RNA sequence: GGGAACGACUCGAGUAGAGUCGAAAAGUGAAUUUAAGGGCUUAGCUUAAUGUGUCUUGAUCAUCAGGCUACAUUAAAGUGAAUUAAAUUGAUGAAUCUAAGUAUGUAGAUACUAAGGGAAAGUGAUGACGGACGUGGGUUCAAAUCCCGCCGCCUCGAUACCAUGUGUGUUCGCACACAUGGUAUCAAAAGAAACAACAACAACAAC
Reactivity to 2A3 in 0.01 (KOAc 150mM, MgCl2 10mM, bicine 150mM(pH8.5), 24C), signal-to-noise 4, nucleotides 027 to 156: g030u050g020a040a060u100u090u130a110a100g040g010g020c030u090u220a010g000c000u010u010a050a000u030g010u010g000u010c000u040u080g020a110u060c040a020u020c010a040g010g020c020u100a010c020a020u040u040a110a020a030g020u020g030a020a040u100u110a070a030a020u090u080g020a030u040g010a080a060u020c020u030a050a030g020u040a050u080g050u040a030g040a120u040a080c030u030a050a070g070g000g030a080a050a070g050u050g050a100u100g000a010c040g000g010a010c040g030u130g000g000g000u040u070c020a000a060a030u020c020c000c000g020c000c020g020c000c010u040c070
Reactivity to DMS in 0.01 (KOAc 150mM, MgCl2 10mM, bicine 150mM(pH8.5), 24C), signal-to-noise 2, nucleotides 027 to 156: g030u020g010a050a050u010u010u000a050a070g000g020g020c030u010u000a060g010c050u000u010a030a030u000g010u000g010u010c110u000u010g020a170u000c080a030u000c040a050g000g030c030u000a030c300a060u000u000a020a000a080g010u000g020a120a160u000u000a050a010a100u010u000g020a070u000g010a100a030u000c030u000a030a110g040u000a050u000g000u000a060g000a120u000a050c050u000a080a090g030g010g010a030a070a100g000u020g000a120u000g020a010c040g010g000a070c020g000u000g030g010g000u020u000c230a050a140a140u000c000c000c000g010c020c000g010c020c000u000c120

The record gives the reactivity of an RNA of 207 nucleotides to 2A3 and DMS. The 2A3 profile rests on 3,165 reads. The RNA was probed in 150 mM KOAc, 10 mM MgCl2 and 150 mM bicine (pH 8.5) at 24 C.